An RNA of 177 nucleotides, treated with 2A3 and DMS and read out base by base. Reactivities are rounded to 0.1 and cut off at 0 and 3. For 2A3, 8,978 sequencing reads were counted. For 2A3 the reverse transcriptase was SuperScript II with manganese.
RNA sequence: GGGAACGACUCGAGUAGAGUCGAAAAGAAAACCGGCUAGACCGUGAUAGUUAGCUGGUCAGAACGGGCGCUUGUCGCGUGCCGGGUCGGGGUUCAAUUCCCCGCCGCUAUCAAACAGCCGGAAAAAGAUAUAUCGCGUAUUCGUACGCGAUAUAUCAAAAGAAACAACAACAACAAC
Reactivity to 2A3 in 0.01 (KOAc 150mM, MgCl2 10mM, bicine 150mM(pH8.5), 24C), signal-to-noise 9, nucleotides 027 to 126: g080a000a080a010a030c010c000g000g000c010u050a050g070a140c040c070g110u020g010a010u010a010g020u110u090a040g030c160u090g080g100u120c030a030g030a090a010c010g010g020g000c000g010c020u220u300g150u300c070g010c020g020u110g300c000c010g000g000g020u140c020g000g000g000g000u010u040c020a020a000u050u030c010c000c000c000g000c000c000g000c000u020a010u000c020a020a020a070c020a020g010c010c010g020g040a050a040a020a000a010
Reactivity to DMS in 0.01 (KOAc 150mM, MgCl2 10mM, bicine 150mM(pH8.5), 24C), signal-to-noise 7, nucleotides 027 to 126: g010a090a040a100a090c000c000g000g010c000u010a080g020a120c070c090g020u040g010a050u010a020g020u000u010a050g010c130u040g010g000u020c210a110g020a150a110c020g000g000g000c000g000c000u000u080g000u010c210g000c000g000u000g020c000c000g020g020g010u020c010g000g010g000g000u000u000c230a090a300u020u000c000c000c000c000g000c010c020g010c010u010a000u010c020a040a180a080c110a140g010c000c000g030g010a050a100a070a110a060
Overview: The reactions ran in a buffer of 150 mM KOAc, 10 mM MgCl2 and 150 mM bicine (pH 8.5), at 24 C.